[RMDB]
RNA sequence: GGGAACGACUCGAGUAGAGUCGAAAAGACAGCUUGUAAUAGUAUCCGUAUAUGCCUACCCUACGCAACUGGGCGUACUCCUUGCAAUGGACUUUUUACAGUUCCUACUUAUCCGGUUUUAACGCUGUCAGACGCUCCACUUCGGUGGAGCGUCUGAAAAAGAAACAACAACAACAAC
Reactivity to 2A3 in 0.01 (KOAc 150mM, MgCl2 10mM, bicine 150mM(pH8.5), 24C), signal-to-noise 1, nucleotides 027 to 126: g000a000c030a000g010c020u040u000g120u000a020a000u090a300g020u020a020u000c000c000g020u120a060u000a020u130g000c000c010u170a160c110c060c000u020a020c010g000c020a000a040c130u130g000g070g000c000g000u020a050c020u040c010c000u020u020g000c010a100a150u250g000g080a070c120u060u020u000u000u170a010c000a000g000u060u000c000c020u030a090c000u090u040a080u140c000c000g070g000u000u000u000u140a000a010c020g000c030u000g000